[RMDB]
RNA sequence: GGGAACGACUCGAGUAGAGUCGAAAAGAGGACCGGCUGACCGUGCUCACCAUGGCCGGGCUCACCCUCCCCAAGGACGGUGUCGGGCGGGAGCACUGGACCGACAGCGAGGCGCUGGGCGUGCAGCUGCUCAACCUCGCGGCGUGGCUGACCCAGCGCCAACUGGAGAGUUCGCUCUCCAGUUGGCAAAAGAAACAACAACAACAAC
Reactivity to 2A3 in 0.01 (KOAc 150mM, MgCl2 10mM, bicine 150mM(pH8.5), 24C), signal-to-noise 2, nucleotides 027 to 156: g040a010g020g040a190c000c000g000g030c030u050g060a110c050c100g040u050g000c030u010c050a160c040c090a180u180g000g000c000c030g000g010g000c000u090c040a140c030c040c010u020c000c030c000c000a030a070g040g020a020c080g060g070u020g000u050c000g000g000g000c010g050g040g000a030g010c010a010c050u090g020g110a140c050c000g020a020c000a000g050c000g010a010g010g010c030g030c050u000g000g000g000c020g020u120g000c030a020g000c010u030g000c000u090c070a140a300c000c040u080c080g000c000g020g000c090g190u160g040g020c000u020g040a130c000c000c030a030g000c020
Reactivity to DMS in 0.01 (KOAc 150mM, MgCl2 10mM, bicine 150mM(pH8.5), 24C), signal-to-noise 2, nucleotides 027 to 156: g020a080g020g010a040c040c020g000g000c010u010g000a140c030c050g040u010g000c030u000c090a140c070c010a080u010g050g010c000c010g020g030g010c030u010c030a120c040c000c020u000c020c000c000c070a110a120g000g000a110c060g010g000u000g010u020c030g000g010g030c040g000g030g010a150g040c030a070c040u030g040g020a160c020c000g000a110c010a070g000c050g030a120g000g030c030g020c000u000g030g010g060c000g000u000g020c100a080g020c030u010g010c020u030c010a070a050c050c030u000c180g000c030g000g020c110g030u010g000g040c010u000g010a140c000c010c000a050g040c050